[RMDB]
RNA sequence: GGGAACGACUCGAGUAGAGUCGAAAAGCCGUUGCCAUGGGGAGCUGACGCUGCCGGGAUCCGGUGCUGUUGUUUGUUGACGGGAUGCCCUUGACUUCGCUGACCGUGGUGUGCGCGUAACCGGCCGCAGGGCAUUACUGUUCGCAGUAAUGCCCUGAAAAGAAACAACAACAACAAC
Reactivity to DMS in 0.01 (KOAc 150mM, MgCl2 10mM, bicine 150mM(pH8.5), 24C), signal-to-noise 2, nucleotides 027 to 126: g010c020c000g040u000u010g000c010c000a060u000g030g000g000g010a120g010c040u000g020a080c160g010c070u000g020c070c100g010g000g010a110u010c050c030g030g030u000g010c020u000g010u000u010g000u010u000u000g010u000u010g020a120c080g010g010g010a110u010g010c000c030c030u000u020g020a070c070u000u000c110g010c040u000g000a120c040c010g010u000g000g020u000g030u010g020c070g010c050g000u010a100a150c060c030g010g000c060c090g010
Record summary
The record gives the reactivity of an RNA of 177 nucleotides to DMS. Source: RMDB library OK2TST, as collected in RNAgym. Reactivities are given for positions 27 through 126. The RNA was probed in 150 mM KOAc, 10 mM MgCl2 and 150 mM bicine (pH 8.5) at 24 C. The DMS profile rests on 2,785 reads.